[RMDB]
Source information
The data come from the RNA Mapping Database (RMDB), library OK2TRN. The record gives the reactivity of an RNA of 177 nucleotides to DMS and 2A3. The DMS profile rests on 7,324 reads. The reactions ran in a buffer of 150 mM KOAc, 10 mM MgCl2 and 150 mM bicine (pH 8.5), at 24 C. 2A3 adducts were read by reverse transcription with SuperScript II with manganese.
RNA sequence: GGGAACGACUCGAGUAGAGUCGAAAAAAUCAGCAUUCCUGAAACCUAGGUGUCCUUAGGAUUUUUCAUUUUUUGGUUUCUACAAACAGCUUUUCAGGGAAGCUGGCUUUGGGGAUGAGGCCUAAGGUAAUGCCUACAUUUUCGAAUGUAGGCAUUAAAAAGAAACAACAACAACAAC
Reactivity to DMS in 0.01 (KOAc 150mM, MgCl2 10mM, bicine 150mM(pH8.5), 24C), signal-to-noise 5, nucleotides 027 to 126: a060a040u010c050a040g010c080a170u010u000c020c010u010g010a040a050a070c250c050u010a050g010g010u000g010u000c020c010u000u000a020g000g000a120u000u010u000u010u010c040a030u000u000u000u000u000u000g010g000u010u010u000c050u000a090c130a040a050a070c040a020g000c030u000u000u000u000c120a100g000g000g000a020a020g010c010u000g010g010c160u010u000u000g000g010g000g000a060u000g010a050g000g000c010c020u000a020a020g010g010
Reactivity to 2A3 in 0.01 (KOAc 150mM, MgCl2 10mM, bicine 150mM(pH8.5), 24C), signal-to-noise 1, nucleotides 027 to 126: a000a000u100c040a010g050c020a030u100u090c000c010u010g040a080a060a070c000c030u030a080g050g060u050g120u150c020c000u000u020a020g000g010a090u110u060u020u110u030c030a020u000u000u030u060u080u080g160g000u020u150u050c040u090a100c020a020a040a000c040a000g010c000u070u030u080u130c040a050g150g080g000a000a020g000c000u000g040g040c030u060u020u050g000g020g030g000a030u090g010a020g020g060c000c000u000a010a010g000g000